RNA sequence: GGGAACGACUCGAGUAGAGUCGAAAAUCUUCUCUCUUCACCCCGUCGAGUGUGACGAGGAGUGUUCUGAAGUAGAGGCUUCAGAUUUAGAAGAAGGUGAAUCAGAGUGCAUUUCUGAGACUUCAACAUGCGGUCGCCUUCGGGCGACCGAAAAGAAACAACAACAACAAC
Reactivity to DMS in 0.01 (KOAc 150mM, MgCl2 10mM, bicine 150mM(pH8.5), 24C), signal-to-noise 2, nucleotides 027 to 129: u010c000u000u010c010u010c090u060c020u000u000c070a080c000c090c000c030g070u050c030g000a190g080u020g030u050g020a000c030g030a060g010g000a130g010u020g000u050u000c060u020g000a000a040g000u020a100g020a210g020g010c040u180u000c000a000g000a030u030u060u080a010g000a110a000g020a000a040g040g040u010g030a000a000u010c080a040g160a040g090u070g030c150a060u050u020u010c160u070g010a050g000a090c030u080u000c030a190a090c110a060u020g000
Reactivity to 2A3 in 0.01 (KOAc 150mM, MgCl2 10mM, bicine 150mM(pH8.5), 24C), signal-to-noise 3, nucleotides 027 to 129: u000c000u010u000c000u000c020u000c000u030u050c000a000c000c000c000c000g010u000c010g020a070g200u240g080u300g100a010c010g040a180g000g060a190g010u020g070u040u000c000u010g000a000a000g000u070a080g050a060g150g020c010u000u000c030a010g000a050u080u060u080a030g000a060a000g000a000a000g030g020u040g170a010a020u070c030a010g010a010g040u100g110c050a060u140u150u000c030u000g040a020g030a020c020u090u160c010a010a060c050a070u140g000

The data come from the RNA Mapping Database (RMDB), library 15KLIB.
Structure probing data (DMS and 2A3) for a 170-nucleotide construct.
The reactions ran in a buffer of 150 mM KOAc, 10 mM MgCl2 and 150 mM bicine (pH 8.5), at 24 C.
For 2A3 the reverse transcriptase was SuperScript II with manganese.
For 2A3, 3,462 sequencing reads were counted.